[RMDB]
The data come from the RNA Mapping Database (RMDB), library OK1LIB. This 177-nucleotide RNA was probed chemically with 2A3. Reactivities are given for positions 27 through 126. The reactions ran in a buffer of 150 mM KOAc, 10 mM MgCl2 and 150 mM bicine (pH 8.5), at 24 C.
RNA sequence: GGGAACGACUCGAGUAGAGUCGAAAAACUGCCUCAGAUCAUAGAAGGCUCUCCUGAACUGCUAGUUAUAAAUCAUUUCUAUGGUUCAGAUUACAUAGAAUCAUUGGGUUUAAAGAACAUGCCUCUAUCGCUGUAGGUUGUUCGCAACCUACAGCGAAAAAGAAACAACAACAACAAC
Reactivity to 2A3 in 0.01 (KOAc 150mM, MgCl2 10mM, bicine 150mM(pH8.5), 24C), signal-to-noise 1, nucleotides 027 to 126: a000c000u030g000c000c000u000c000a050g000a000u290c000a300u120a300g200a240a000g000g090c140u000c000u030c000c000u000g060a050a030c000u000g050c140u110a050g080u010u000a060u050a220a030a100u100c080a150u000u000u130c090u060a060u000g000g000u000u030c030a090g000a160u040u200a030c030a030u230a060g000a050a120u000c050a110u030u030g110g000g000u040u130u110a170a300a000g030a000a140c120a110u210g000c000c020u120c000u000a060